Source: RMDB library RNAMAK, as collected in RNAgym. This 207-nucleotide RNA was probed chemically with 2A3 and DMS. The 2A3 profile rests on 5,596 reads. The RNA was probed in 150 mM KOAc, 10 mM MgCl2 and 150 mM bicine (pH 8.5) at 24 C.
RNA sequence: GGGAACGACUCGAGUAGAGUCGAAAACACGGUAUUCGUACCGUGAAAAUCCUAAGUCGGACCAACAGCUUCUAUUGGUCCUUUGAUCUAUCGGAAACGAUAGGGAGGACAGGGAAGACAUGGUCCGAUAUGGAAAACACAUUAGUUCGCUAAUGUGGAACUGGAAGGUAUUCGUACCUUCCAGUUCAAAAGAAACAACAACAACAAC
Reactivity to 2A3 in 0.01 (KOAc 150mM, MgCl2 10mM, bicine 150mM(pH8.5), 24C), signal-to-noise 5, nucleotides 027 to 156: c000a000c010g000g000u030a040u080u120c260g080u080a000c000c010g000u010g000a050a010a000a000u040c000c000u020a060a020g040u000c000g000g010a010c000c000a030a100c060a150g030c010u020u000c010u070a280u300u300g170g000u020c020c000u040u080u000g000a010u010c000u000a000u000c010g050g040a140a040a040c000g000a000u000a000g000g000g010a000g000g000a000c010a030g120g010g020a020a010g040a070c040a110u050g000g000u020c000c000g000a000u000a000u010g010g040a010a080a040a020c010a000c000a010u010u000a010g040u060u060c220g010c200u020a000a010u000g000u010g060
Reactivity to DMS in 0.01 (KOAc 150mM, MgCl2 10mM, bicine 150mM(pH8.5), 24C), signal-to-noise 2, nucleotides 027 to 156: c010a000c010g010g000u000a020u000u000c240g080u000a010c010c030g000u010g010a020a100a130a140u010c000c000u000a060a280g000u000c000g000g020a040c020c010a050a040c100a270g030c030u000u010c010u000a160u000u000g020g000u010c000c020u000u000u010g000a100u010c000u000a010u010c020g010g010a240a180a300c010g030a010u000a010g020g000g030a020g030g030a030c000a100g080g000g020a050a110g050a030c010a300u000g010g000u010c000c000g010a000u000a070u000g000g020a110a060a090a300c010a030c020a000u000u000a000g080u010u020c300g000c010u000a000a010u000g020u000g000